This 177-nucleotide RNA was probed chemically with DMS and 2A3. The RNA was probed in 150 mM KOAc, 10 mM MgCl2 and 150 mM bicine (pH 8.5) at 24 C. For 2A3 the reverse transcriptase was SuperScript II with manganese. The data come from the RNA Mapping Database (RMDB), library M2PK50.
RNA sequence: GGGAACGACUCGAGUAGAGUCGAAAAUCCGACCGCUUCGGCGGUCGGAAAAGAUAGCGUGGGACACCGAUGGCAUACGGUGAAGAACGCAACAAUGCCAAAAAAUCCCUUUGUUCGCAAAGGGAAACAUAUCUCGGUAGUUCGCUACCGAGAUAUGAAAAGAAACAACAACAACAAC
Reactivity to DMS in 0.01 (KOAc 150mM, MgCl2 10mM, bicine 150mM(pH8.5), 24C), signal-to-noise 3, nucleotides 027 to 126: u000c010c000g020a020c030c000g010c000u000u020c160g050g020c000g020g070u010c000g000g010a010a020a070a140g020a080u010a070g010c010g000u000g010g010g010a300c000a010c000c010g000a080u000g000g030c190a160u000a080c020g000g000u000g000a030a240g010a100a010c000g020c020a080a060c190a070a080u000g010c020c020a000a020a020a100a110a100u020c000c000c000u010u000u000g010u000u010c200g020c010a010a010a020g000g000g000a000a020a100
Reactivity to 2A3 in 0.01 (KOAc 150mM, MgCl2 10mM, bicine 150mM(pH8.5), 24C), signal-to-noise 1, nucleotides 027 to 126: u030c010c000g020a010c010c010g060c040u040u060c170g140g000c000g040g000u000c040g050g000a020a000a000a000g050a040u150a010g010c010g010u010g040g020g020a010c010a000c010c010g060a110u080g150g000c060a090u130a240c030g000g000u010g000a000a000g140a030a000c010g040c010a000a000c020a030a080u140g050c040c000a050a000a010a010a010a130u030c000c000c000u020u000u000g050u010u040c210g000c110a000a000a000g000g000g000a000a010a000